An RNA of 207 nucleotides, treated with 2A3 and read out base by base. The reactions ran in a buffer of 150 mM KOAc, 10 mM MgCl2 and 150 mM bicine (pH 8.5), at 24 C.

RNA sequence: GGGAACGACUCGAGUAGAGUCGAAAACCGUAGGCGUUCGAACUACGCUGUGAGCAUGGUCAUCGAUCUUCGCUUCGAAAGAGGCGAAGGGAGACCAUGCACAGCGCGAACGCCUAAACGGAAAAGCUCAGAUAUACUUUCGAGUAUAUCUGAGCAACCGUGGGAAAGGUUUCGACCUUUCCCACGGAAAAGAAACAACAACAACAAC
Reactivity to 2A3 in 0.01 (KOAc 150mM, MgCl2 10mM, bicine 150mM(pH8.5), 24C), signal-to-noise 1, nucleotides 027 to 156: c010c000g000u010a000g010g060c000g010u010u000c010g060a240a180c110u120a060c190g010c020u000g020u030g150a040g040c040a000u010g010g010u010c020a220u260c240g110a120u000c040u030u000c000g000c000u000u000c000g100a090a120a130g000a010g000g040c000g000a000a020g000g010g000a020g000a000c000c000a000u000g000c000a000c000a000g030c030g000c000g010a000a000c000g000c010c000u020a040a000a000c000g070g000a000a110a040a110g040c000u000c000a000g000a000u000a000u000a010c000u080u050u300c300g000a000g000u010a000u000a000u030c000u000g000a000g010c000a000a000